[RMDB]
RNA sequence: GGGAACGACUCGAGUAGAGUCGAAAAACAAAUGCUAGGUCGAGUUCUUAGCUUACCUAUUAUUAUAUAUACUGGUUUUAUUCCUCUUGGUAUGAUGAUUUUCGGACCAAUGGCAGAUGUAAUUUCUCCACUAAUACCCGUUCGCGGGUAUUAGUGGAAAAGAAACAACAACAACAAC
Reactivity to 2A3 in 0.01 (KOAc 150mM, MgCl2 10mM, bicine 150mM(pH8.5), 24C), signal-to-noise 3, nucleotides 027 to 126: a000c010a000a120a020u060g000c000u010a020g000g070u040c050g090a060g090u120u070c040u060u120a060g050c030u010u060a070c000c040u070a080u210u090a160u300u000a070u080a070u010a010u050a110c080u060g000g000u090u070u070u070a070u170u100c000c000u050c040u100u090g050g010u050a070u030g090a060u010g110a110u120u100u080u070c050g040g010a030c020c040a050a130u130g030g000c030a000g020a040u030g010u040a080a060u000u040u000c070u000